[RMDB]
RNA sequence: GGGAACGACUCGAGUAGAGUCGAAAACUGUCUCAGUGUUCAUCCCCUGAUCAAGGAUGCCCGAAACGGUGAGGCGGAAAGCAAAUUAAAUAACGUCAACCCAUCUGGACGGUUGGCCAGUUAAGAAAAAACCGGGGAGUCUUCGGACUCCCCGGAAGAUGUUAAUCUUGUUCGCAAGAUUAACAUCAAAAGAAACAACAACAACAAC
Reactivity to 2A3 in 0.01 (KOAc 150mM, MgCl2 10mM, bicine 150mM(pH8.5), 24C), signal-to-noise 1, nucleotides 027 to 156: c010u050g020u000c010u000c000a280g230u020g000u070u060c020a010u020c010c010c000c000u060g070a100u060c020a030a020g000g000a000u000g020c000c050c010g170a080a050a010c050g000g040u010g010a010g010g000c030g000g010a080a090a000g000c050a040a050a230u120u150a070a090a150u140a060a080c010g020u000c030a010a000c020c010c010a020u070c120u160g020g100a030c040g010g030u000u010g010g040c000c020a020g040u050u060a110a080g040a060a120a080a030a020a000c000c000g000g000g020g010a010g030u000c010u050u090c220g050g000a000c000u000c000c000c040c000g000g000a000a000

Conditions: 150 mM KOAc, 10 mM MgCl2 and 150 mM bicine (pH 8.5), 24 C. Structure probing data (2A3) for a 207-nucleotide construct. It was measured as part of the RMDB library M2RFPK. The 2A3 profile rests on 755 reads.